RNA sequence: GGGAACGACUCGAGUAGAGUCGAAAAGUCGGUAAGCGUGGCGGGUACAUGACGCCAGGUUUCAGCGGCCUAAUCGCGCUGGAUGAUAUCGACAAGCCUGAUGAUAUGUUCUCAAAGGUGAAGCGCGAAAAGAACCACGUACUGCUGAAGAACACCACAUGUCAAUUCCGUUCGCGGAAUUGACAUGAAAAGAAACAACAACAACAAC
Reactivity to 2A3 in 0.01 (KOAc 150mM, MgCl2 10mM, bicine 150mM(pH8.5), 24C), signal-to-noise 1, nucleotides 027 to 156: g010u000c000g010g000u030a080a030g020c060g050u020g040g000c020g020g000g030u090a100c090a080u120g050a050c010g000c040c030a060g060g040u050u040u050c180a040g000c020g090g000c010c000u070a150a040u010c010g010c000g000c050u030g000g080a050u190g050a100u090a110u260c090g030a090c120a060a000g060c000c000u010g040a010u070g030a050u040a020u190g120u120u010c000u000c010a030a090a050g020g000u090g020a040a000g010c010g000c000g030a100a080a010a000g070a030a010c020c000a020c030g070u090a020c060u010g000c010u020g000a060a030g090a130a020c040a050c100c000a080